Chemical mapping of a 177-nucleotide RNA with DMS and 2A3. Values cover nucleotides 27 to 126. For DMS the reverse transcriptase was MarathonRT. High DMS reactivity at an A or C suggests that its Watson-Crick edge is free. The RNA was probed in 150 mM KOAc, 10 mM MgCl2 and 150 mM bicine (pH 8.5) at 24 C. The data come from the RNA Mapping Database (RMDB), library M2PK50. For DMS, 8,200 sequencing reads were counted.
[RMDB]
RNA sequence: GGGAACGACUCGAGUAGAGUCGAAAACACAUUCUAUUCGUAGAAUGUGGAACGUAGAGAGAUCGACAGCGUCGCAGCUAUGUCGAACGAGGAAGAGCGCGCAGGGAUCGGGCUUCGGCCCGAUCAAUCAGGAAAGAAUCUUCGGAUUCUUUCCUGAAAAAGAAACAACAACAACAAC
Reactivity to DMS in 0.01 (KOAc 150mM, MgCl2 10mM, bicine 150mM(pH8.5), 24C), signal-to-noise 6, nucleotides 027 to 126: c000a010c000a000u000u000c000u000a010u000u010c170g020u000a000g000a020a000u000g010u000g010g010a080a070c090g010u010a080g000a130g010a140g000a090u000c010g020a030c020a060g010c030g010u000c240g010c150a140g000c020u000a060u010g010u000c010g010a020a100c080g010a100g010g010a060a050g000a050g010c050g010c080g020c150a080g010g010g000a020u000c010g010g010g010c010u000u010c200g030g000c000c000c000g000a000u000c010a040a080
Reactivity to 2A3 in 0.01 (KOAc 150mM, MgCl2 10mM, bicine 150mM(pH8.5), 24C), signal-to-noise 2, nucleotides 027 to 126: c000a000c000a010u000u010c000u020a000u040u040c140g070u030a000g010a020a000u000g020u010g000g000a050a020c040g080u190a030g040a010g000a000g020a190u030c010g030a010c000a030g020c030g080u150c090g040c090a090g000c010u090a080u220g050u030c000g020a050a030c030g020a050g040g030a050a040g020a040g050c040g000c020g040c040a030g110g050g000a000u000c000g000g000g000c000u050u060c220g080g010c000c010c000g000a000u000c000a000a010